[RMDB]
An RNA of 177 nucleotides, treated with DMS and 2A3 and read out base by base. The DMS profile rests on 2,819 reads. DMS adducts were read by reverse transcription with MarathonRT. For 2A3, 3,058 sequencing reads were counted. For 2A3 the reverse transcriptase was SuperScript II with manganese. The RNA was probed in 150 mM KOAc, 10 mM MgCl2 and 150 mM bicine (pH 8.5) at 24 C. Source: RMDB library M2PK50, as collected in RNAgym. Reactivities are given for positions 27 through 126.

RNA sequence: GGGAACGACUCGAGUAGAGUCGAAAAAGGGCUGGAUUCGUCCAGCCCUGCACUUUCGUACGCAACGAAGCGUACGUCAUUACGCAAAUGACGUAAAGCGUAGAACCACGGACUUCGGUCCGUGGAAACUGAAAUGUCCUUUCGAGGACAUUUCAGUAAAAGAAACAACAACAACAAC
Reactivity to DMS in 0.01 (KOAc 150mM, MgCl2 10mM, bicine 150mM(pH8.5), 24C), signal-to-noise 3, nucleotides 027 to 126: a020g000g010g030c010u000g000g010a030u000u010c210g030u000c000c000a010g000c010c000c000u000g000c140a080c080u000u020u000c030g000u000a050c050g000c010a080a090c150g000a090a060g020c100g000u000a000c020g010u000c050a020u000u010a060c280g020c190a060a040a030u000g000a040c040g010u000a020a060a260g000c010g000u000a100g000a110a230c010c000a010c000g010g000a030c000u030u010c160g030g010u000c000c000g030u010g000g000a000a040
Reactivity to 2A3 in 0.01 (KOAc 150mM, MgCl2 10mM, bicine 150mM(pH8.5), 24C), signal-to-noise 2, nucleotides 027 to 126: a000g020g000g000c020u000g000g000a020u060u060c180g030u000c050c010a000g000c000c000c000u000g000c000a000c020u110u160u080c030g020u010a000c010g010c070a160a100c160g150a120a070g050c000g020u000a010c010g000u010c020a040u010u080a020c050g010c090a050a060a170u120g070a040c020g030u040a090a060a000g000c000g000u060a050g030a090a050c010c000a000c000g000g010a000c020u060u070c260g100g010u000c010c000g000u000g000g000a020a010